[RMDB]
RNA sequence: GGGAACGACUCGAGUAGAGUCGAAAACACAGCACUGGUCAGAGGCAACAAUUUGCAGCGGGCGAUUCAGCACGUCGCAGCAGGCCUGCAUAAUGACCUGGUUUUUCCGCGCGAUGCCGCCCAGUGCGUCAGCCGAAUAAUUCGUUAUUCGGCUGACAAAAGAAACAACAACAACAAC
Reactivity to 2A3 in 0.01 (KOAc 150mM, MgCl2 10mM, bicine 150mM(pH8.5), 24C), signal-to-noise 5, nucleotides 027 to 126: c020a010c020a020g030c000a000c020u030g010g030u090c100a080g090a150g300g000c010a070a050c050a140a230u080u120u290g050c070a080g000c000g000g020g000c010g010a010u140u090c040a000g030c080a010c100g020u020c020g020c000a010g010c010a020g110g080c040c010u030g000c010a070u130a220a140u300g020a030c000c010u020g030g040u020u010u010u040u060c010c010g020c010g000c010g040a030u040g010c000c000g010c000c010c010a000g000u010g000c010
Reactivity to DMS in 0.01 (KOAc 150mM, MgCl2 10mM, bicine 150mM(pH8.5), 24C), signal-to-noise 4, nucleotides 027 to 126: c090a100c130a130g030c030a030c040u000g020g000u010c120a110g010a170g020g040c040a040a120c170a150a090u010u010u010g030c010a090g020c020g010g000g000c050g000a030u010u010c060a120g010c140a100c300g000u000c020g000c010a080g000c050a040g000g020c040c010u000g000c170a110u030a090a070u000g010a030c050c000u000g010g000u000u000u000u000u010c010c010g020c010g040c030g000a080u010g010c020c010g030c140c000c000a050g010u010g000c030
The record gives the reactivity of an RNA of 177 nucleotides to 2A3 and DMS. Conditions: 150 mM KOAc, 10 mM MgCl2 and 150 mM bicine (pH 8.5), 24 C. It was measured as part of the RMDB library OK2TST. DMS adducts were read by reverse transcription with MarathonRT.